[RMDB]
RNA sequence: GGGAACGACUCGAGUAGAGUCGAAAAAAAGGUAGCGGUUGCAUUGCUAUCAGUUUAUUAUGUGAACUACCAAAUACGAACAUAAUUGCAACCGAUAUAAGUGUCGAUGCAAUAAAAGUUGCAAAAAUCAUACUUGUACGUUCGCGUGCAGGUAUGAAAAAGAAACAACAACAACAAC
Reactivity to 2A3 in 0.01 (KOAc 150mM, MgCl2 10mM, bicine 150mM(pH8.5), 24C), signal-to-noise 9, nucleotides 027 to 126: a010a000a010g040g000u020a020g000c030g030g060u060u100g040c030a040u040u140g000c020u030a040u080c000a010g000u030u040u040a100u080u030a070u120g070u030g020a030a020c020u050a060c040c030a050a060a060u210a080c080g070a100a010c030a040u120a100a040u070u020g000c000a030a060c100c010g000a000u020a000u020a090a130g100u090g010u090c030g020a030u070g000c010a010a010u060a110a130a030a040g040u050u030g000c000a040a020a000a030a040
Reactivity to DMS in 0.01 (KOAc 150mM, MgCl2 10mM, bicine 150mM(pH8.5), 24C), signal-to-noise 9, nucleotides 027 to 126: a060a090a080g000g010u000a010g020c020g020g010u010u010g010c090a090u010u010g010c030u000a030u000c030a060g010u000u000u000a070u010u000a040u000g010u000g000a050a050c090u000a300c040c050a070a060a100u010a100c200g010a110a040c040a030u000a030a040u000u000g000c020a020a040c060c010g000a070u000a060u010a080a090g020u010g010u000c050g010a110u000g000c010a030a030u000a050a050a090a110g000u000u000g010c020a010a040a060a090a100

An RNA of 177 nucleotides, treated with 2A3 and DMS and read out base by base. It was measured as part of the RMDB library OK2TST. DMS adducts were read by reverse transcription with MarathonRT. For DMS, 28,381 sequencing reads were counted. Reactivities are given for positions 27 through 126. The 2A3 profile rests on 23,720 reads. The RNA was probed in 150 mM KOAc, 10 mM MgCl2 and 150 mM bicine (pH 8.5) at 24 C. For 2A3 the reverse transcriptase was SuperScript II with manganese.